Conditions: 150 mM KOAc, 10 mM MgCl2 and 150 mM bicine (pH 8.5), 24 C. An RNA of 207 nucleotides, treated with 2A3 and read out base by base. The 2A3 profile rests on 1,037 reads. Values cover nucleotides 27 to 156.
RNA sequence: GGGAACGACUCGAGUAGAGUCGAAAAGGGGUCCCAGCUGGCGAUGGGAGGACGAUAAGUAACUGAAGCCUCCACGGUUACUUUUGACGUCCGAAGAACAUCGCUGGCUGGGACGGAGGCACCCAAAGAGAUACUUAGAUUCGUCUAAGUAUCUCAAGGAUGUGCUCUAGUUCGCUAGAGCACAUCCAAAAGAAACAACAACAACAAC
Reactivity to 2A3 in 0.01 (KOAc 150mM, MgCl2 10mM, bicine 150mM(pH8.5), 24C), signal-to-noise 1, nucleotides 027 to 156: g060g000g000g000u000c010c000c000a000g020c000u000g000g000c000g000a000u010g040g080g060a150g020g000a010c020g030a040u010a140a020g000u000a000a010c000u020g100a150a030g040c010c040u010c050c030a020c000g030g000u030u000a000c000u120u060u050u120g300a140c090g020u010c000c020g040a090a010g030a020a010c000a000u000c000g010c000u000g000g000c000u000g010g020g000a000c020g000g000a020g000g000c010a010c070c000c000a050a190a000g000a000g000a000u000a000c000u000u000a000g030a030u070u040c160g020u000c140u000a000a000g000u000a000u000c000u000c000a000a010